[RMDB]
RNA sequence: GGGAACGACUCGAGUAGAGUCGAAAAACGGAUCCGUAACUUCGGGAAAAGGAUUGGCUCUGAGGGUUGGGCUCGGGGGUCCCGGCCCCGAACCCGUCGGCUGCCGGCGGACUGCUCGAGCUGCUCAUAUGAUCGUCUAAUUCGUUAGACGAUCAUAAAAAGAAACAACAACAACAAC
Reactivity to DMS in 0.01 (KOAc 150mM, MgCl2 10mM, bicine 150mM(pH8.5), 24C), signal-to-noise 4, nucleotides 027 to 126: a140c110g010g010a040u000c000c000g000u020a110a160c050u020u010c110g000g010g000a060a060a110a160g000g000a040u000u010g010g000c010u000c020u020g010a120g010g000g010u010u010g020g000g020c010u000c010g010g000g000g000g010u000c000c000c010g010g000c020c300c000c020g020a020a040c050c040c040g010u000c000g000g010c100u010g020c030c020g010g020c170g000g000a040c020u000g010c000u000c000g010a050g020c020u000g000c030u000c100a220
Reactivity to 2A3 in 0.01 (KOAc 150mM, MgCl2 10mM, bicine 150mM(pH8.5), 24C), signal-to-noise 4, nucleotides 027 to 126: a000c040g020g010a020u020c000c000g040u080a050a070c030u090u100c110g050g020g040a050a060a040a050g040g010a060u050u070g030g000c020u010c020u080g030a070g050g070g010u070u070g030g000g000c040u040c020g020g000g010g000g000u020c000c010c000g040g000c040c010c000c000g020a040a030c010c000c000g070u020c000g000g020c060u100g030c030c000g030g020c090g000g030a030c010u080g050c010u120c000g000a000g010c010u040g000c000u020c020a030
Structure probing data (DMS and 2A3) for a 177-nucleotide construct. The data come from the RNA Mapping Database (RMDB), libraries RFM100 and RFMREP. The RNA was probed in 150 mM KOAc, 10 mM MgCl2 and 150 mM bicine (pH 8.5) at 24 C.